[RMDB]
RNA sequence: GGGAACGACUCGAGUAGAGUCGAAAAACGUACCUAUUCGUAGGUACGUGAUUAAAAGCUAGUCAUAUAUAAGGAAGACUAGCAAUAUAGAAUCCUAUAUUAAUAGCACAUGUUUCGACAUGUGCAAGACGAAUUAAAGUUUCGACUUUAAUUCGUCAAAAGAAACAACAACAACAAC
Reactivity to DMS in 0.01 (KOAc 150mM, MgCl2 10mM, bicine 150mM(pH8.5), 24C), signal-to-noise 5, nucleotides 027 to 126: a020c010g010u000a010c000c000u000a010u010u010c180g010u010a000g000g010u000a000c000g010u000g010a080u000u000a050a100a110a140g000c000u000a000g000u000c000a120u000a120u020a190u020a130a130g010g010a220a130g010a010c000u000a000g000c000a030a030u000a080u000a060g000a110a120u000c010c000u000a050u010a070u020u000a090a120u010a160g010c000a000c000a010u000g000u000u010u020c170g010a030c000a000u000g000u000g010c000a020a030
Reactivity to 2A3 in 0.01 (KOAc 150mM, MgCl2 10mM, bicine 150mM(pH8.5), 24C), signal-to-noise 8, nucleotides 027 to 126: a000c000g000u000a000c000c000u010a030u030u090c240g050u040a000g000g000u000a000c000g000u000g000a010u020u090a040a070a030a020g000c000u010a000g000u010c020a040u110a020u100a040u060a300a100g170g030a120a140g030a010c000u000a000g000c000a000a000u050a010u000a010g110a060a050u030c000c020u060a060u020a040u300u180a150a190u100a130g000c000a000c000a000u000g020u030u090u080c190g060a020c000a000u000g000u010g000c000a000a000
This 177-nucleotide RNA was probed chemically with DMS and 2A3.
The 2A3 profile rests on 12,613 reads.
The data come from the RNA Mapping Database (RMDB), library M2PK50.
The RNA was probed in 150 mM KOAc, 10 mM MgCl2 and 150 mM bicine (pH 8.5) at 24 C.